The record gives the reactivity of an RNA of 207 nucleotides to 2A3. 2A3 adducts were read by reverse transcription with SuperScript II with manganese. It was measured as part of the RMDB library VIROID. The reactions ran in a buffer of 150 mM KOAc, 10 mM MgCl2 and 150 mM bicine (pH 8.5), at 24 C.
RNA sequence: GGGAACGACUCGAGUAGAGUCGAAAACGCGGUUCUUCUUCGACUCGGACCGGCUCAUCUCGACGAGAGGCGGCAGUCCUCAGUACUCUUACUCUUUGUUUGUAAAGAGGAGACUGCUGGACUCGCCGCCCAAGUUCGAGCUUGGGCCACAGUUCCGCCAAAAGUUGAUGUUCGCAUCAACUUUUGGAAAAGAAACAACAACAACAAC
Reactivity to 2A3 in 0.01 (KOAc 150mM, MgCl2 10mM, bicine 150mM(pH8.5), 24C), signal-to-noise 3, nucleotides 027 to 156: c150g040c120g030g080u080u080c070u090u020c010u080u060c030g040a020c010u000c040g010g060a030c040c050g000g000c000u010c000a010u030c000u010c000g000a010c020g000a020g030a190g140g000c000g000g000c000a000g000u000c000c010u020c010a100g000u110a300c010u000c010u060u130a210c000u030c010u030u120u070g210u210u230u300g290u300a020a010a000g000a010g040g000a000g000a000c010u010g040c100u020g000g000a000c000u030c110g000c000c000g000c010c000c000a010a010g010u060u030c030g000a000g010c020u000u000g000g000g000c000c000a000c000a000g000u020u020c010c010g000